[RMDB]
RNA sequence: GGGAACGACUCGAGUAGAGUCGAAAAAGGCCGUGGGGCUCUGCAAGGCGCAGAUCACUGUAAGCACAGGUCAUGGCGGAGGGCAGGGGACUGUGGCCUUGUGGGGUUCUCCUGCUCUUGGGCCAGCCAUUUGCUAUAAGUUCGCUUAUAGCAAAUGAAAAGAAACAACAACAACAAC
Reactivity to DMS in 0.01 (KOAc 150mM, MgCl2 10mM, bicine 150mM(pH8.5), 24C), signal-to-noise 9, nucleotides 027 to 126: a090g000g010c010c030g030u010g010g000g010g010c090u000c020u000g010c050a090a090g010g020c110g010c040a030g000a070u010c080a080c050u000g000u010a090a110g010c070a090c120a090g010g000u000c080a120u000g010g030c020g010g000a040g000g000g010c010a020g000g010g000g000a050c180u000g010u010g010g010c020c020u000u010g010u000g010g010g000g010u000u000c010u000c020c000u000g000c010u000c020u000u000g000g030g030c010c010a070g000c130
Reactivity to 2A3 in 0.01 (KOAc 150mM, MgCl2 10mM, bicine 150mM(pH8.5), 24C), signal-to-noise 7, nucleotides 027 to 126: a000g030g000c010c010g030u080g020g050g020g000c010u000c020u050g010c020a090a100g150g000c040g010c040a000g010a060u060c030a020c120u060g060u170a070a050g050c040a040c020a150g030g040u080c060a100u040g020g020c040g030g030a030g010g020g000c020a010g000g010g010g000a010c050u110g050u130g190g020c010c020u020u030g040u080g020g040g000g000u060u020c020u010c010c010u010g000c010u000c020u020u020g040g080g000c000c000a000g000c010
Chemical mapping of a 177-nucleotide RNA with DMS and 2A3. For 2A3 the reverse transcriptase was SuperScript II with manganese. The data come from the RNA Mapping Database (RMDB), library OK2TST. For 2A3, 17,457 sequencing reads were counted. The RNA was probed in 150 mM KOAc, 10 mM MgCl2 and 150 mM bicine (pH 8.5) at 24 C.